[RMDB]
RNA sequence: GGGAACGACUCGAGUAGAGUCGAAAAAACAAAUUGCAUGUACAUGUAUUAAGAAGACUAUAACAUAUAUCAGUUACUUCACUAGAUGCCAGUGCAUAGGCAUGUACCUGAAUCUGCGUAACUAAUUGGGAGAAUGGGAAGUUAACUUUAUUUUUCAUAAUGAUUUACGGUUCGCCGUAAAUCAUUAAAAAGAAACAACAACAACAAC
Reactivity to DMS in 0.01 (KOAc 150mM, MgCl2 10mM, bicine 150mM(pH8.5), 24C), signal-to-noise 2, nucleotides 027 to 156: a050a120c060a050a050a070u000u000g010c000a070u020g020u010a070c030a070u000g010u010a070u010u000a060a120g010a100a150g000a110c010u000a110u000a150a070c040a110u000a080u000a110u000c050a050g000u000u000a050c000u010u000c040a080c050u000a090g020a070u000g010c020c040a100g040u000g050c030a070u000a110g040g030c110a050u000g020u000a020c060c030u000g020a290a040u000c060u010g010c050g010u000a040a050c040u000a040a060u010u000g020g000g030a140g020a110a040u000g020g000g000a070a120g000u000u000a030a110c040u000u000u000a030u030u010u000u000u000c020a300
Reactivity to 2A3 in 0.01 (KOAc 150mM, MgCl2 10mM, bicine 150mM(pH8.5), 24C), signal-to-noise 3, nucleotides 027 to 156: a000a000c180a020a120a040u210u120g030c010a020u080g040u080a060c000a060u020g060u110a140u130u080a140a060g020a040a000g010a050c020u040a070u120a300a020c020a060u190a070u070a030u200c040a010g010u000u050a020c030u000u000c040a020c080u030a050g000a190u050g040c020c040a020g030u050g040c040a100u070a080g040g000c010a000u000g010u020a040c010c010u010g050a040a050u050c040u080g060c060g040u010a020a020c020u020a090a050u110u120g060g010g010a030g060a070a040u030g000g030g020a010a050g050u050u070a040a010c020u040u070u090a180u120u180u010u020u010c030a000